[RMDB]
RNA sequence: GGGAACGACUCGAGUAGAGUCGAAAACGUCACCAUGGUCGUAGAGUGUGGCGGCUUUCUGGGUCAUCAGCUUGGCGAGUUCGACCUCAAUGUGGCACUGCGCCAACGGAUGUGCCAGGCCCUGGUGCUUGGACAUUGUGUUCGCACAAUGUCCAAGAAAAGAAACAACAACAACAAC
Reactivity to 2A3 in 0.01 (KOAc 150mM, MgCl2 10mM, bicine 150mM(pH8.5), 24C), signal-to-noise 3, nucleotides 027 to 126: c020g020u010c000a020c040c060a060u100g080g070u110c090g070u100a030g040a090g190u120g030u010g040g030c030g010g000c020u020u110u020c020u020g000g010g060u060c000a020u000c010a030g110c130u000u020g000g000c000g020a010g000u060u170c050g090a200c030c010u030c120a240a190u300g010u120g090g000c060a000c050u190g050c070g000c010c000a000a010c010g050g010a000u000g000u100g220c000c010a000g020g020c020c000c020u080g080g070u080g020
Reactivity to DMS in 0.01 (KOAc 150mM, MgCl2 10mM, bicine 150mM(pH8.5), 24C), signal-to-noise 3, nucleotides 027 to 126: c070g010u010c010a030c020c050a220u000g000g000u000c050g030u000a130g020a100g030u010g000u010g000g030c030g010g000c110u010u000u010c030u010g010g010g010u000c020a040u000c100a110g010c170u000u000g020g000c000g010a090g020u000u020c030g030a170c040c020u010c180a070a090u010g020u000g010g000c060a080c040u000g010c080g000c010c030a040a030c040g000g020a020u000g010u010g000c020c020a080g000g030c030c010c040u010g000g010u000g020
Chemical mapping of a 177-nucleotide RNA with 2A3 and DMS. For 2A3, 3,089 sequencing reads were counted. 2A3 adducts were read by reverse transcription with SuperScript II with manganese. Values are in units of 0.01, from 0 to 300, in steps of 10. Values cover nucleotides 27 to 126. Conditions: 150 mM KOAc, 10 mM MgCl2 and 150 mM bicine (pH 8.5), 24 C.